[RMDB]
RNA sequence: GGGAACGACUCGAGUAGAGUCGAAAACAACAAUGGUAUGCGUGGUUUGCGGCCCUAAUUUAUUCAGCACGCGACUGCCGCAUCCCGCACGGGAGGCGCAGCUGCUGCAUGACGCUUUAACGUCGCAUACUGUCUAGAUUUUCGAAUCUAGACAGUAAAAAGAAACAACAACAACAAC
Reactivity to DMS in 0.01 (KOAc 150mM, MgCl2 10mM, bicine 150mM(pH8.5), 24C), signal-to-noise 9, nucleotides 027 to 126: c070a080a100c170a090a090u020g010g010u010a030u000g010c070g020u010g000g010u000u010u010g020c030g010g000c030c140c080u010a040a060u020u020u010a090u020u010c070a050g010c010a030c180g020c020g000a050c030u000g000c090c060g010c020a040u010c010c000c010g010c290a090c210g010g000g000a020g000g010c020g000c010a020g010c020u000g010c010u000g000c040a090u010g010a060c230g010c060u010u010u020a060a120c100g010u000c030g000c070a120
Reactivity to 2A3 in 0.01 (KOAc 150mM, MgCl2 10mM, bicine 150mM(pH8.5), 24C), signal-to-noise 9, nucleotides 027 to 126: c050a020a000c040a050a190u150g070g030u130a050u100g040c030g030u050g030g040u060u050u070g010c010g010g030c000c010c000u070a090a120u070u130u170a140u070u090c030a010g000c010a010c110g020c010g060a050c020u030g090c090c050g000c000a020u010c010c000c000g080c090a090c100g000g000g000a010g010g000c010g000c010a010g000c010u040g000c010u010g010c030a100u070g010a010c020g030c020u070u080u130a110a030c040g030u020c010g010c010a020

Overview:
Structure probing data (DMS and 2A3) for a 177-nucleotide construct. It was measured as part of the RMDB libraries RFM100 and RFMREP.